[RMDB]
RNA sequence: GGGAACGACUCGAGUAGAGUCGAAAACAUAAUGGCUUCGGCCAUUAUGAAAAAACCUUUGUGUCCUUGUGGACAUGCCAUACGUGGCCCAUUGGGCCACGUAAUGGCAACAGCCAUGGGACACUCUGGUAAAAAGUCCAUGGUUCGCCAUGGACAAGACUUUUUUGAAGUUCGCUUCAAAAAAGUCAAAAGAAACAACAACAACAAC
Reactivity to 2A3 in 0.01 (KOAc 150mM, MgCl2 10mM, bicine 150mM(pH8.5), 24C), signal-to-noise 1, nucleotides 027 to 156: c000a000u000a000a000u000g000g000c000u060u050c180g060g050c040c000a010u000u000a000u000g010a130a000a010a000a000a000c020c000u080u010u000g020u000g000u000c000c030u130u160g040u000g070g020a060c020a100u010g010c000c010a060u000a010c000g010u000g000g050c000c070c000a210u180u300g020g000g000c010c000a000c010g020u000a000a040u000g000g000c000a000a000c010a010g030c000c010a000u000g020g000g000a000c000a000c000u000c000u000g010g000u110a140a140a030a030a030g010u020c000c020a000u030g000g090u040u050c260g040c030c000a000u040g020g010a000c000a000a000